[RMDB]
RNA sequence: GGGAACGACUCGAGUAGAGUCGAAAACAAUUGUACAACUAACCGUGUGACGAAGGCAAGUCCUCUUGAAAUGUUAUUGGGAAAGGUAGCGCGCCCAUUAGGAUUACUUCCACCUGGUGACAUAGAACUCCCCAUCAUCAUUCGUGAUGAUGGGGAGAAAAGAAACAACAACAACAAC
Reactivity to 2A3 in 0.01 (KOAc 150mM, MgCl2 10mM, bicine 150mM(pH8.5), 24C), signal-to-noise 2, nucleotides 027 to 126: c000a020a110u150u160g080u140a080c030a120a030c100u130a010a080c030c030g070u060g030u070g040a060c100g020a000a000g080g000c010a050a030g060u030c000c000u000c020u060u100g060a070a060a110u130g030u130u090a060u070u050g070g010g100a160a240a050g000g060u040a040g000c030g030c000g040c060c010c010a010u030u040a020g020g010a000u080u100a090c040u030u000c010c000a050c010c000u010g020g030u010g120a000c030a060u130a060g080a030a030
Reactivity to DMS in 0.01 (KOAc 150mM, MgCl2 10mM, bicine 150mM(pH8.5), 24C), signal-to-noise 2, nucleotides 027 to 126: c080a090a100u000u000g010u000a150c220a100a120c090u000a100a080c040c010g030u010g000u010g030a060c120g010a060a080g000g010c060a050a080g000u000c050c080u010c100u000u030g000a100a080a100u000g020u010u000a030u020u000g020g010g000a040a070a070g000g010u000a020g020c090g020c090g020c100c050c040a060u000u000a070g010g020a030u020u000a090c080u000u000c000c010a030c040c030u020g000g000u000g000a120c080a050u000a080g000a160a140
Structure probing data (2A3 and DMS) for a 177-nucleotide construct. In probing experiments dimethyl sulfate is read out at A N1 and C N3, which are open when not base-paired. Reactivities are given for positions 27 through 126. It was measured as part of the RMDB library OK2TST.